[RMDB]
RNA sequence: GGGAACGACUCGAGUAGAGUCGAAAAUCAAUCUGAAAAAAUACAUAUCCUUUCAGCACUCUGGACGGACUUGAGAACUGUCCUUACGUGACCUAAAGCUGGAGUAUUUUGAGAUUGGAGAAUUAAGGCCGUUUAUAUACUUCGGUAUAUAAACGGCAAAAGAAACAACAACAACAAC
Reactivity to DMS in 0.01 (KOAc 150mM, MgCl2 10mM, bicine 150mM(pH8.5), 24C), signal-to-noise 1, nucleotides 027 to 126: u020c000a040a010u000c000u010g000a000a030a020a000a020a000u000a020c000a060u010a220u010c230c000u000u010u010c190a030g020c010a010c000u000c020u000g000g000a000c020g010g010a050c090u010u000g030a300g020a130a060c000u010g010u000c000c000u000u000a020c250g010u010g010a140c070c050u000a020a000a090g010c230u000g020g010a140g000u000a000u000u000u000u000g000a020g000a000u000u010g030g010a110g000a110a020u000u020a060a160g000
Reactivity to 2A3 in 0.01 (KOAc 150mM, MgCl2 10mM, bicine 150mM(pH8.5), 24C), signal-to-noise 1, nucleotides 027 to 126: u060c020a000a020u040c010u030g160a020a060a000a060a000a060u000a000c010a010u230a070u090c000c000u010u040u040c030a030g040c000a010c000u030c010u000g000g000a000c000g020g030a020c010u210u250g160a090g040a240a000c000u010g000u020c000c000u000u020a030c120g000u000g190a230c000c060u040a000a040a040g060c070u050g050g020a010g010u000a000u010u010u010u030g000a040g010a000u000u020g030g060a070g040a120a130u130u120a080a060g170

Chemical mapping of a 177-nucleotide RNA with DMS and 2A3. The reactions ran in a buffer of 150 mM KOAc, 10 mM MgCl2 and 150 mM bicine (pH 8.5), at 24 C. For 2A3, 775 sequencing reads were counted. Reactivities are given for positions 27 through 126. 2A3 adducts were read by reverse transcription with SuperScript II with manganese.